[RMDB]
RNA sequence: GGGAACGACUCGAGUAGAGUCGAAAACUCCAACCUACUGACAAUUCUACAACUGUUAGUGUUACUGUAUCCAGUAACAUGGUUGAAACUGUUGUGGGUCAACUUGAGCAAACUAAUAUGCAUAGUCGUUCUUAGUGGACUUCGGUCCACUAAGAACAAAAGAAACAACAACAACAAC
Reactivity to 2A3 in 0.01 (KOAc 150mM, MgCl2 10mM, bicine 150mM(pH8.5), 24C), signal-to-noise 2, nucleotides 027 to 126: c010u000c000c000a020a030c030c000u100a030c030u070g020a000c010a080a100u080u030c020u010a000c000a010a030c030u010g020u100u060a070g020u030g000u000u000a000c000u020g080u130a200u190c230c000a000g000u000a000a000c000a020u030g100g000u030u100g010a030a010a000c010u030g010u010u010g000u010g000g010g000u000c040a090a030c020u090u140g070a020g070c050a050a000a080c030u110a080a120u170a130u180g000c020a030u100a060g060u050c060
Reactivity to DMS in 0.01 (KOAc 150mM, MgCl2 10mM, bicine 150mM(pH8.5), 24C), signal-to-noise 1, nucleotides 027 to 126: c020u000c000c060a060a030c030c000u000a010c050u020g030a060c020a150a050u000u010c020u000a130c040a000a070c010u000g000u010u000a060g020u010g000u000u000a000c000u000g000u000a170u010c300c010a040g000u000a000a000c000a000u000g000g000u040u000g000a110a240a130c010u000g000u000u000g040u000g000g000g000u010c050a180a140c170u000u010g000a160g000c090a030a060a130c100u000a130a050u000a110u000g040c040a170u000a010g040u030c160